Notes
An RNA of 207 nucleotides, treated with 2A3 and read out base by base. Conditions: 150 mM KOAc, 10 mM MgCl2 and 150 mM bicine (pH 8.5), 24 C. Source: RMDB library OK3TST, as collected in RNAgym. For 2A3 the reverse transcriptase was SuperScript II with manganese.

RNA sequence: GGGAACGACUCGAGUAGAGUCGAAAAGGCGGCCGGGCAGAGGCUGCAAUCUCGGCACUUUGCGGGGCCAAGGCAGGCAGCUGGGAGGUGGAGGUUGUAGCGAACUGAGAUCACGCCACUGCACCCCAGCCUGGGCACCAUUGAGCACUGAGUGAACGAAUUAUCAUCCGUUCGCGGAUGAUAAUUCAAAAGAAACAACAACAACAAC
Reactivity to 2A3 in 0.01 (KOAc 150mM, MgCl2 10mM, bicine 150mM(pH8.5), 24C), signal-to-noise 1, nucleotides 027 to 156: g050g020c020g020g000c040c040g000g030g110c060a070g050a060g100g020c000u000g020c010a030a040u050c020u000c000g000g030c010a030c070u090u110u220g070c120g000g020g020g000c020c030a050a050g060g030c030a000g050g110c020a000g030c030u060g000g000g000a140g020g000u020g020g030a030g000g060u100u040g050u090a050g020c030g030a020a030c050u150g030a050g030a130u110c050a000c090g040c000c000a020c030u060g030c030a160c010c020c010c000a010g000c000c000u020g000g030g000c020a020c030c010a060u000u160g030a050g040c040a030c100u040g010a030g030u080g040a060a040c090